[RMDB]
RNA sequence: GGGAACGACUCGAGUAGAGUCGAAAAAGGUUCGCUGUGGUGCAACUCUUAUUAGUAACUAAUCCAAAGCAAGUAUAUGAGAACAGGUUUUUAACUAUUUUUAGGCAGAUAAAAAAUAGUAUUUGACAAAAUCGAUUGUCGUUCGCGACAAUCGAAAGUUAAUACCGCACUUCGGUGCGGUAUUAACAAAAGAAACAACAACAACAAC
Reactivity to 2A3 in 0.01 (KOAc 150mM, MgCl2 10mM, bicine 150mM(pH8.5), 24C), signal-to-noise 1, nucleotides 027 to 156: a000g090g010u050u030c020g000c030u030g020u060g140g010u040g000c030a000a000c000u020c030u160u150a140u090u040a050g090u020a090a050c020u010a030a100u000c020c050a140a000a030g010c040a100a000g030u120a110u110a020u300g030a070g080a110a040c010a110g130g000u000u000u000u050u050a070a020c000u000a000u010u000u000u050u030a010g050g000c010a050g070a220u050a010a060a000a000a000a010u000a000g010u000a100u080u030u160g030a040c070a020a100a010a190u020c000g000a010u000u000g000u010c020g000u020u020c110g050c000g100a000c000a000a000u000c000g000a000a010a000
The record gives the reactivity of an RNA of 207 nucleotides to 2A3. For 2A3 the reverse transcriptase was SuperScript II with manganese. Conditions: 150 mM KOAc, 10 mM MgCl2 and 150 mM bicine (pH 8.5), 24 C.